[RMDB]
RNA sequence: GGGAACGACUCGAGUAGAGUCGAAAAACUUGCACGGCGGUCGCAGUGCCGACUCCGUUAGCGGCAUCAACGGCGCGUUGCUUGAUCCGCACGCGCUCAGCAUCAAAACUACAAUCAGGGCGGUUAGCGGUACUGUUGAGUUCGCUCAACAGUACCGAAAAGAAACAACAACAACAAC
Reactivity to 2A3 in 0.01 (KOAc 150mM, MgCl2 10mM, bicine 150mM(pH8.5), 24C), signal-to-noise 2, nucleotides 027 to 126: a000c030u060u160g000c030a010c050g160g000c040g040g030u030c010g040c060a120g040u000g130c030c000g090a070c000u030c030c000g040u020u080a050g000c000g010g000c000a040u070c030a040a090c010g020g000c010g010c030g060u100u110g000c000u060u030g040a040u040c030c000g030c000a010c000g000c000g000c050u040c030a000g060c020a050u140c030a040a090a090a090c050u080a040c020a050a030u090c010a030g060g070g000c040g010g060u090u110a060g040
Reactivity to DMS in 0.01 (KOAc 150mM, MgCl2 10mM, bicine 150mM(pH8.5), 24C), signal-to-noise 2, nucleotides 027 to 126: a040c070u010u000g020c080a060c060g000g010c150g020g000u000c030g030c030a120g010u000g010c080c000g020a060c050u000c070c100g000u000u000a060g000c000g000g000c100a070u020c160a110a120c230g010g000c010g000c030g000u010u000g010c000u000u000g020a080u010c150c190g000c020a070c000g020c020g000c020u020c080a050g010c070a080u000c080a000a040a140a110c060u010a090c090a070a040u030c120a070g000g000g020c030g010g000u000u000a100g000